An RNA of 177 nucleotides, treated with DMS and 2A3 and read out base by base. 2A3 adducts were read by reverse transcription with SuperScript II with manganese. The RNA was probed in 150 mM KOAc, 10 mM MgCl2 and 150 mM bicine (pH 8.5) at 24 C.

RNA sequence: GGGAACGACUCGAGUAGAGUCGAAAAUAAAACGAUCGGGAAAGCGGUGCCAUAAUCCGUACCGCCUUACCAACCUCAGUCAAAAGUAUAAGUUUUCUUAUUUCACAACUCAUUGGGCAAUAGCCCACGCGUAUCCACUAUUCGUAGUGGAUACGCGAAAAGAAACAACAACAACAAC
Reactivity to DMS in 0.01 (KOAc 150mM, MgCl2 10mM, bicine 150mM(pH8.5), 24C), signal-to-noise 1, nucleotides 027 to 126: u080a000a000a050a300c080g000a250u020c010g000g010g000a100a300a080g010c060g080g000u000g000c000c040a000u040a240a000u010c200c300g000u000a080c000c140g020c000c000u040u110a000c030c000a090a260c060c040u000c180a150g000u000c220a050a240a130a210g000u000a160u000a170a090g000u040u080u000u000c040u000u000a120u000u000u000c060a160c160a060a190c120u000c160a000u090u000g000g000g000c000a160a140u000a000g100c080c000c000a010
Reactivity to 2A3 in 0.01 (KOAc 150mM, MgCl2 10mM, bicine 150mM(pH8.5), 24C), signal-to-noise 3, nucleotides 027 to 126: u150a000a040a010a000c120g040a100u130c030g030g000g020a030a000a000g000c000g030g020u000g000c000c000a090u180a190a030u030c010c030g000u010a000c000c010g040c000c000u190u240a010c000c000a020a020c000c000u030c010a010g050u060c100a050a050a070a000g070u090a090u050a130a080g040u030u070u090u170c010u010u070a100u170u080u100c130a080c060a110a140c040u140c130a140u080u110g000g000g000c040a070a300u040a140g000c000c000c010a010